[RMDB]
RNA sequence: GGGAACGACUCGAGUAGAGUCGAAAAUAGAAACAAGUUUUUAAAGCUGCAUUUUAAUUGUGUUUGCAUAUUGGUUUACUAAAAUGAAAGCUAUACAGUACUUAACACAUAACCACUUAUAUAAGUAUACUCAAGAUUAAUUCGUUAAUCUUGAGUAAAAAGAAACAACAACAACAAC
Reactivity to 2A3 in 0.01 (KOAc 150mM, MgCl2 10mM, bicine 150mM(pH8.5), 24C), signal-to-noise 2, nucleotides 027 to 126: u050a000g040a020a100a000c040a050a000g020u030u040u060u100u250a130a170a000g000c010u030g020c010a010u040u010u060u110a070a180u170u080g000u000g070u090u130u090g040c050a030u100a130u200u120g080g020u000u120u100a050c040u050a000a090a060a000u100g020a200a120a000g000c000u000a020u010a080c050a020g070u030a020c010u020u020a080a020c030a000c010a050u080a070a010c030c060a060c010u200u100a100u050a080u020a300a010g090u110a070
Reactivity to DMS in 0.01 (KOAc 150mM, MgCl2 10mM, bicine 150mM(pH8.5), 24C), signal-to-noise 4, nucleotides 027 to 126: u010a120g010a090a110a080c050a060a070g000u010u000u020u010u010a060a110a130g010c010u000g000c040a040u000u000u010u010a040a150u000u010g010u010g000u000u010u010g010c100a090u010a060u010u010g010g010u000u000u000a050c120u000a040a030a050a050u000g000a040a070a040g010c040u000a050u000a060c140a080g010u000a040c080u000u000a040a040c090a060c060a040u010a060a110c050c030a080c120u010u010a100u020a120u010a050a070g010u010a140